[RMDB]
RNA sequence: GGGAACGACUCGAGUAGAGUCGAAAACGCAUGCGAGAGCAUGCGGCUAAGCUUCGGCUUAGUAAGAGCAAGUUAGGAUUAUAGGCUCCCCGGCGUGUCUCGAACCAUGCCGGGCCAAACCCAUAGGGCUGGCGGUCCCUGUGCGGUCCAAAUUCAAGUAUCCGUCAUCAUUCGUGAUGACGGAUACAAAAGAAACAACAACAACAAC
Reactivity to 2A3 in 0.01 (KOAc 150mM, MgCl2 10mM, bicine 150mM(pH8.5), 24C), signal-to-noise 2, nucleotides 027 to 156: c000g000c000a000u000g000c010g000a020g000a010g070c000a000u010g020c000g010g020c000u000a000a000g000c000u010u070c220g100g000c010u000u020a000g000u010a060a040g020a000g020c020a110a030g060u240u290a120g040g050a090u060u080a050u140a180g040g070c000u000c020c010c000c000g000g000c000g000u000g020u020c050u010c210g040a050a050c050c000a000u000g010c000c000g030g000g000c010c000a010a010a020c000c000c000a000u010a010g000g000g020c020u050g100g030c070g030g040u080c000c010c000u010g010u000g020c170g000g010u030c040c030a050a070a030u130u120c110a160a000